[RMDB]
RNA sequence: GGGAACGACUCGAGUAGAGUCGAAAAGAUAUGGAUAGCGGGUCCUCGAUAAGAAGCAUUCGGAAACGAAUGGCUUCUUUUGACGAGGACCGCUAUCCUAAGUCAAACUUAACCUUCGGGUUAAGAACAAUUGCGUCUACUUCGGUAGACGCAAUUGAAAAGAAACAACAACAACAAC
Reactivity to DMS in 0.01 (KOAc 150mM, MgCl2 10mM, bicine 150mM(pH8.5), 24C), signal-to-noise 1, nucleotides 027 to 126: g000a090u000a300u010g000g020a040u010a010g030c020g000g000g040u010c000c000u010c020g000a220u000a010a000g000a000a000g000c000a010u010u010c000g010g000a140a030a260c020g050a020a000u010g030g050c000u000u000c000u000u010u000u020g000a270c180g010a050g010g010a100c000c000g040c000u000a010u000c000c000u000a000a070g000u010c020a150a130a280c010u030u000a000a000c010c000u000u010c220g040g000g010u000u000a000a010g000a190a280